[RMDB]
RNA sequence: GGGAACGACUCGAGUAGAGUCGAAAACGUGUCCGUCGGCGUAGCCGACAACAUGCCCAGGUAGCCCAGACCUUCAAGGCUACGGUGCGUUGCUACGCACGGUCUGAUUCUUCACAACGACGUUCACAAGAUCGGAUCACUUUCGAGUGAUCCGAAAUGUUAGCAGGACAUUCGUGUCCUGCUAACAAAAAGAAACAACAACAACAAC
Reactivity to 2A3 in 0.01 (KOAc 150mM, MgCl2 10mM, bicine 150mM(pH8.5), 24C), signal-to-noise 1, nucleotides 027 to 156: c030g000u000g000u060c070c010g000u000c000g000g000c150g210u170a090g000c010c000g000a000c000a000a010c000a000u080g000c000c000c000a010g000g000u000a000g000c000c070c110a010g010a000c000c050u000u030c010a000a010g010g040c000u020a010c000g000g000u010g000c010g020u050u160g110c060u270a000c000g020c000a000c010g000g020u030c000u000g030a020u150u000c010u110u080c030a140c110a290a110c090g140a030c020g030u020u090c130a080c030a240a100g060a150u040c010g040g050a000u000c000a000c000u100u100u100c190g100a010g000u000g000a000u000c030c000g000a000a000a000
Conditions: 150 mM KOAc, 10 mM MgCl2 and 150 mM bicine (pH 8.5), 24 C.
Structure probing data (2A3) for a 207-nucleotide construct.
The 2A3 profile rests on 534 reads.